[RMDB]
RNA sequence: GGGAACGACUCGAGUAGAGUCGAAAACAACCCAACUCCUACUCAAUACGUCCUCGUCGUACAGAACGGUAACAUGUUUUCCGAACUUCCGCGCUUGGGUAUACGAGUAUACACCUUACCCAACCCUCCAACCACCUAAAGUUCGCUUUAGGUGGAAGUUCAUUGCUUCCUUCGGGAAGCAAUGAACAAAAGAAACAACAACAACAAC
Reactivity to 2A3 in 0.01 (KOAc 150mM, MgCl2 10mM, bicine 150mM(pH8.5), 24C), signal-to-noise 2, nucleotides 027 to 156: c080a080a080c010c000c000a050a080c010u100c050c060u100a090c020u060c050a000a060u030a100c040g050u050c020c040u030c040g060u080c020g000u050a080c050a110g060a150a010c030g040g020u070a060a020c070a160u130g050u150u070u050u020c020c000g030a040a040c000u050u000c030c020g100c010g050c110u030u060g000g000g010u050a090u010a010c090g000a020g070u010a000u040a010c050a070c040c040u070u140a090c000c000c000a040a040c020c000c000u030c010c000a030a160c000c000a000c010c000u000a000a000a000g010u020u030c140g120c130u000u000u000a000g000g000u000g010g010a000a000